RNA sequence: GGGAACGACUCGAGUAGAGUCGAAAAGGGAAAGCUGUCUGGGCUCCCAUCAUGCCCUGGUUUUCUAGCGACCCAGCCUCUGAUCCCUAAGCUUGGCCUUCCCCAUCACAGCUUUCAUCACUUUGUGCUAAGCUUCCGCUAUCACUACUCUGGGCCGGUACAGUAAGCCUUUCGAGGCUUACUGUACAAAAGAAACAACAACAACAAC
Reactivity to 2A3 in 0.01 (KOAc 150mM, MgCl2 10mM, bicine 150mM(pH8.5), 24C), signal-to-noise 2, nucleotides 027 to 156: g060g010g000a040a100a020g000c040u040g020u190c050u060g030g030g000c010u070c050c090c010a050u110c030a030u120g010c020c000c000u020g070g030u040u030u070u080c050u030a040g030c030g100a100c000c000c030a010g040c010c010u100c040u050g060a090u070c030c010c020u060a040a000g000c000u030u040g000g000c010c010u040u020c050c020c020c010a070u150c060a000c010a000g010c000u020u100u060c060a090u100c020a100c110u060u160u090g010u150g040c030u020a020a020g000c000u090u030c020c020g040c040u080a060u110c040a030c070u210a020c020u050c030u040g030g000g000c040c040g000